RNA sequence: GGGAACGACUCGAGUAGAGUCGAAAAGUCCUAGGUAUCAGGAAACUGAGGAUUGCUUGAGCCCAGGAGUUAGAGUUUGCAGUGAGCUCUGAUCACACCACUGCACUCCAGCCUGGACAACAGAGCAAGACGCUGCCUCUAAAUAAAUGAAUAAAUACUCCCCACUAUAGUUCGCUAUAGUGGGGAGAAAAGAAACAACAACAACAAC
Reactivity to 2A3 in 0.01 (KOAc 150mM, MgCl2 10mM, bicine 150mM(pH8.5), 24C), signal-to-noise 1, nucleotides 027 to 156: g070u060c000c010u010a050g020g000u110a070u190c110a030g000g010a030a080a010c040u000g030a010g090g040a090u010u040g020c000u000u000g000a000g000c000c000c000a000g060g000a140g000u120u300a000g000a000g030u080u300u230g040c000a000g000u000g070a130g000c000u040c140u110g070a110u270c030a050c010a000c060c000a000c000u000g010c000a000c000u000c000c000a040g030c000c000u010g020g030a000c000a000a010c020a010g150a000g120c000a000a000g000a000c000g030c030u040g040c010c000u010c060u090a060a130a100u120a080a190a080u160g000a070a020u090a080a040a090u210a040

Source information: An RNA of 207 nucleotides, treated with 2A3 and read out base by base. The data come from the RNA Mapping Database (RMDB), library OK3TST. The reactions ran in a buffer of 150 mM KOAc, 10 mM MgCl2 and 150 mM bicine (pH 8.5), at 24 C.